[RMDB]
RNA sequence: GGGAACGACUCGAGUAGAGUCGAAAACUAACAGUUAGAUUUAAACAGAUGGAGAUACACAAAUGUUUGAAUCCCAGUAACAAAAAUCCUGGUAUCUCGGGUAUACAGUAGUGCAGAUACUGUAUUUACGCUGUCUAAUGUUCGCAUUAGACAGCGUAAAAGAAACAACAACAACAAC
Reactivity to 2A3 in 0.01 (KOAc 150mM, MgCl2 10mM, bicine 150mM(pH8.5), 24C), signal-to-noise 3, nucleotides 027 to 126: c040u060a090a000c060a040g020u020u060a070g000a230u010u090u050a000a020a000c000a020g030a070u020g000g010a010g000a000u000a020c000a000c010a020a140a120u030g010u020u030u010g050a020a020u050c010c010c030a110g090u110a150a170c080a140a040a000a020a040u040c000c000u000g020g010u030a020u000c000u000c010g010g020g010u000a000u000a000c000a000g040u050a000g080u080g300c110a000g010a180u010a000c000u000g010u010a000u010u000u010